[RMDB]
The record gives the reactivity of an RNA of 207 nucleotides to DMS and 2A3. For DMS, 2,605 sequencing reads were counted. The reactions ran in a buffer of 150 mM KOAc, 10 mM MgCl2 and 150 mM bicine (pH 8.5), at 24 C. The 2A3 profile rests on 1,223 reads.

RNA sequence: GGGAACGACUCGAGUAGAGUCGAAAACUCCACCCCAGGCAGCGCUGACCAGAGCCCUCCGGAGACUACAGCCAGGGAGUGUGGCUCCAGGGAAUGGGGAGGAGGUCAUCAGCUUUGCUACUGUCACAGGUGGGUGAGGGAGAGAGCAACAGGCAAAUCGGGAUAUACUAUUCGUAGUAUAUCCCGAAAAAGAAACAACAACAACAAC
Reactivity to DMS in 0.01 (KOAc 150mM, MgCl2 10mM, bicine 150mM(pH8.5), 24C), signal-to-noise 1, nucleotides 027 to 156: c050u000c030c010a020c020c010c020c080a200g020g040c050a140g020c030g020c040u010g010a080c050c020a210g000a180g000c050c020c020u000c020c030g000g020a110g020a170c020u020a110c020a060g010c020c020a120g000g020g020a140g020u010g030u000g020g000c010u000c000c000a090g000g000g010a110a080u000g020g040g010g020a020g010g000a100g050g020u000c040a060u000c020a060g020c010u000u000u000g030c030u000a040c050u000g000u000c030a130c070a090g020g020u040g010g000g000u000g000a090g000g020g000a120g020a100g000a130g020c040a070a090c060a070g000g020c080a040a100a210
Reactivity to 2A3 in 0.01 (KOAc 150mM, MgCl2 10mM, bicine 150mM(pH8.5), 24C), signal-to-noise 2, nucleotides 027 to 156: c030u030c000c010a030c010c000c000c030a010g010g000c030a010g000c000g000c050u000g020a030c000c010a050g010a000g100c000c000c000u000c040c010g080g020a020g030a080c040u050a010c050a050g170c030c020a070g010g070g060a150g030u090g010u020g020g000c000u000c010c010a070g000g000g130a020a140u090g040g010g000g000a020g050g000a020g000g000u000c000a050u000c010a010g030c000u090u120u120g050c020u020a090c030u040g070u160c050a090c010a120g020g050u020g030g040g000u020g020a050g000g050g000a040g010a000g000a000g030c030a040a100c020a050g100g030c040a010a000a090